[RMDB]
RNA sequence: GGGAACGACUCGAGUAGAGUCGAAAAUCAUUGCUAGAGCGAAAGCUAGUGUAUGGGCUCCGGGGAUAGUACGGACGCAAGUUUGAAACUUGAAGAAAUUGACGGAAGGACACCACAAGGAGUGGAGAAAUCCGUCUGCAUUCGUGCAGACGGAUUUAAAAGAAACAACAACAACAAC
Reactivity to 2A3 in 0.01 (KOAc 150mM, MgCl2 10mM, bicine 150mM(pH8.5), 24C), signal-to-noise 1, nucleotides 027 to 126: u040c000a010u000u000g000c000u000a000g000a040g100c200g120a110a010a000g000c000u000a020g030u030g000u010a060u090g000g000g000c000u040c000c000g110g000g030g000a050u090a090g050u000a020c010g080g080a000c010g010c030a010a020g000u070u160u300g050a180a060a040c000u000u030g000a020a020g040a060a230a120u070u010g060a040c020g000g000a000a000g110g000a030c000a000c150c000a000c000a040a150g200g020a020g040u000g030g000a040g030
Reactivity to DMS in 0.01 (KOAc 150mM, MgCl2 10mM, bicine 150mM(pH8.5), 24C), signal-to-noise 2, nucleotides 027 to 126: u030c060a060u030u000g000c000u000a010g030a140g020c170g020a080a130a140g020c030u000a050g020u000g000u050a100u040g000g020g000c010u000c000c030g000g000g000g000a100u020a020g040u030a060c010g000g030a200c100g000c040a000a040g000u030u020u010g000a160a050a050c050u020u030g020a090a050g000a080a070a070u010u030g010a100c080g040g010a110a060g040g010a070c130a050c010c000a030c050a120a140g010g010a100g000u010g010g000a070g000
An RNA of 177 nucleotides, treated with 2A3 and DMS and read out base by base. High 2A3 reactivity points to a flexible backbone, as in loops and unpaired stretches. For DMS the reverse transcriptase was MarathonRT. Conditions: 150 mM KOAc, 10 mM MgCl2 and 150 mM bicine (pH 8.5), 24 C. The data come from the RNA Mapping Database (RMDB), library RFM100.